An RNA of 177 nucleotides, treated with 2A3 and DMS and read out base by base.
RNA sequence: GGGAACGACUCGAGUAGAGUCGAAAAGAUAUGGAUGUGGACCCUCUCUUAAUGGUCUAUGAAGUCGGAAACGAUGGAGACCAUGAGAGAGCCACAUCCUAAGUCAAAAGGCUUGUUCGCAAGCCAAUCAUUAGUCUGUCUUCGGACAGACUAAUGAAAAAGAAACAACAACAACAAC
Reactivity to 2A3 in 0.01 (KOAc 150mM, MgCl2 10mM, bicine 150mM(pH8.5), 24C), signal-to-noise 2, nucleotides 027 to 126: g010a010u100a040u180g000g020a000u020g010u030g060g040a140c080c080c000u000c000u030c000u030u090a300a080u070g010g000u000c000u030a300u130g040a000a010g030u020c010g030g060a050a060a090c020g000a000u020g000g000a010g000a000c000c020a010u020g010a000g000a000g000a000g010c000c000a000c010a000u000c000c000u000a010a010g050u020c050a030a000a080a160g020g000c000u030u010g020u110u180c250g000c170a000a000g000c000c020a000a030
Reactivity to DMS in 0.01 (KOAc 150mM, MgCl2 10mM, bicine 150mM(pH8.5), 24C), signal-to-noise 3, nucleotides 027 to 126: g000a080u000a300u010g000g000a010u010g010u010g000g010a230c090c290c010u000c010u010c000u000u000a140a030u000g000g000u000c000u000a140u010g010a140a280g000u000c010g010g000a100a080a140c000g000a000u010g010g000a040g000a020c000c000a000u010g010a010g040a010g000a050g000c000c010a000c010a000u010c000c000u010a010a060g000u020c030a130a050a140a150g010g000c010u000u000g000u010u000c200g030c020a010a010g010c010c010a050a080
Values cover nucleotides 27 to 126.
For 2A3, 4,076 sequencing reads were counted.
For 2A3 the reverse transcriptase was SuperScript II with manganese.